[RMDB]
RNA sequence: GGGAACGACUCGAGUAGAGUCGAAAAUGGAGCGAUAGGUACGCGCCUCGUUGAGGAUCACCUGUCCCAGCGCCAGGGUGGUGGUCGCUUCCAGUCCGCCGUAGUGGUAGGUGCCCCACAGCGGCGAGACUACUCCUCAGUUCGCUGAGGAGUAGUCAAAAGAAACAACAACAACAAC
Reactivity to DMS in 0.01 (KOAc 150mM, MgCl2 10mM, bicine 150mM(pH8.5), 24C), signal-to-noise 8, nucleotides 027 to 126: u000g000g010a060g010c020g010a040u000a050g010g000u000a060c110g020c100g000c020c010u010c030g010u000u010g010a080g010g000a050u000c080a070c070c030u000g000u010c010c010c050a140g010c060g010c170c070a100g010g010g010u000g010g020u000g010g010u000c010g010c020u010u000c020c060a110g010u000c090c020g010c000c010g020u000a110g020u000g000g010u010a050g010g010u000g000c030c090c000c010a010c020a300g020c010g000g000c020g010a070
Reactivity to 2A3 in 0.01 (KOAc 150mM, MgCl2 10mM, bicine 150mM(pH8.5), 24C), signal-to-noise 8, nucleotides 027 to 126: u080g020g000a020g000c020g020a020u030a090g130g080u140a040c050g040c020g040c110c010u030c020g150u060u180g070a130g040g030a030u070c050a040c110c050u080g070u110c000c010c010a030g020c030g020c070c080a060g040g020g020u070g010g030u040g020g010u020c000g000c000u130u030c010c000a030g070u050c050c010g000c000c000g060u100a120g010u020g030g000u040a090g040g080u050g020c020c010c000c010a010c000a010g010c010g000g000c000g000a010
Structure probing data (DMS and 2A3) for a 177-nucleotide construct. The reactions ran in a buffer of 150 mM KOAc, 10 mM MgCl2 and 150 mM bicine (pH 8.5), at 24 C. Source: RMDB library OK2TST, as collected in RNAgym. Reactivities are rounded to 0.1 and cut off at 0 and 3.